[RMDB]
Conditions: 150 mM KOAc, 10 mM MgCl2 and 150 mM bicine (pH 8.5), 24 C. An RNA of 207 nucleotides, treated with 2A3 and read out base by base.

RNA sequence: GGGAACGACUCGAGUAGAGUCGAAAACAAUUCAAACUACAGAUGGUACAACUAUGCUUAAUCAAACUAGUUGGUUAAUUGGUAAUGCAGAAAAUGAAGCAGGUGUUGAAUACAAUAUUUACUCACCCUGGUUAGGUCUUGCAUUUAUUUUAGGUGCCCGUCACAAAACAUUCGUGUUUUGUGACGGAAAAGAAACAACAACAACAAC
Reactivity to 2A3 in 0.01 (KOAc 150mM, MgCl2 10mM, bicine 150mM(pH8.5), 24C), signal-to-noise 1, nucleotides 027 to 156: c070a000a030u300u210c120a060a150a040c050u130a010c090a000g050a070u010g080g070u160a010c030a120a020c030u120a070u300g000c000u040u120a030a040u090c090a070a130a070c040u050a030g080u010u000g080g010u110u070a070a040u110u000g140g020u110a030a030u040g000c000a000g010a050a130a030a000u110g040a110a080g110c000a000g020g030u030g040u220u080g080a060a020u090a090c040a130a060u110a230u190u200u100a160c000u010c000a000c000c000c000u030g170g000u130u030a050g130g000u000c010u010u000g000c000a000u010u110u030a130u060u130u100u070a040g030g000u050g000c070